This 177-nucleotide RNA was probed chemically with DMS and 2A3. Source: RMDB library OK2TRN, as collected in RNAgym. The reactions ran in a buffer of 150 mM KOAc, 10 mM MgCl2 and 150 mM bicine (pH 8.5), at 24 C. For 2A3 the reverse transcriptase was SuperScript II with manganese. The DMS profile rests on 13,281 reads. DMS adducts were read by reverse transcription with MarathonRT.
[RMDB]
RNA sequence: GGGAACGACUCGAGUAGAGUCGAAAAUUGAGGAUCGGCAGCAUCAUUGUCGGAAUUGUGGACGAGUAGUCUGUGAGGAUUGUUCGAAGAAUCGAUUUUCGGUGAUUGAAGAAGGAAAAAGUGUGCACACUCCUCCUAAUUUCGAUUAGGAGGAGUGAAAAGAAACAACAACAACAAC
Reactivity to DMS in 0.01 (KOAc 150mM, MgCl2 10mM, bicine 150mM(pH8.5), 24C), signal-to-noise 8, nucleotides 027 to 126: u000u010g010a090g000g000a070u010c060g010g010c050a060g010c100a090u010c080a080u000u000g020u010c050g000g000a050a070u000u000g020u010g010g020a150c040g010a070g010u010a040g010u010c010u000g010u010g000a130g010g000a060u000u000g010u000u000c030g010a070a090g010a140a090u010c050g000a060u000u000u000u000c030g010g000u000g010a080u000u010g010a050a060g010a060a060g000g010a040a040a050a070a090g010u000g000u010g020c100a250
Reactivity to 2A3 in 0.01 (KOAc 150mM, MgCl2 10mM, bicine 150mM(pH8.5), 24C), signal-to-noise 4, nucleotides 027 to 126: u080u080g030a040g030g020a030u040c030g040g010c010a010g020c010a030u040c010a020u100u080g050u050c010g010g060a020a030u070u080g030u060g060g020a010c010g000a030g030u050a020g010u000c040u030g070u040g030a040g010g010a020u050u020g030u040u050c040g010a110a020g050a090a090u060c020g020a030u040u020u060u120c050g000g030u040g030a060u040u150g050a050a060g020a020a020g010g070a060a050a020a000a010g090u130g020u050g030c020a020